[RMDB]
RNA sequence: GGGAACGACUCGAGUAGAGUCGAAAAGAUAUGGAACCCUUUGGGACAUGCCUAUAUGGUCGGAAACGACCAGAAAGGCAACAGCCCACGGAGGGUUCCUAAGUCAAAUCUAGGCUUCGGCCUAGAAUCAGCAUACGAUGUUCGCAUCGUAUGCUGAAAAAGAAACAACAACAACAAC
Reactivity to DMS in 0.01 (KOAc 150mM, MgCl2 10mM, bicine 150mM(pH8.5), 24C), signal-to-noise 1, nucleotides 027 to 126: g040a010u000a300u000g010g000a010a000c000c000c000u010u000u000g000g040g030a050c050a300u000g040c000c000u020a110u050a290u000g000g010u000c000g020g000a120a010a200c000g010a000c000c000a000g000a090a300a070g000g000c000a000a040c270a130g000c040c000c000a200c300g040g000a020g000g070g030u000u000c030c000u000a010a050g020u000c020a160a180a180u000c000u000a000g000g010c000u000u040c300g020g010c000c000u010a010g000a090a100
This 177-nucleotide RNA was probed chemically with DMS.
For DMS, 581 sequencing reads were counted.
Source: RMDB library TTRDES, as collected in RNAgym.
The RNA was probed in 150 mM KOAc, 10 mM MgCl2 and 150 mM bicine (pH 8.5) at 24 C.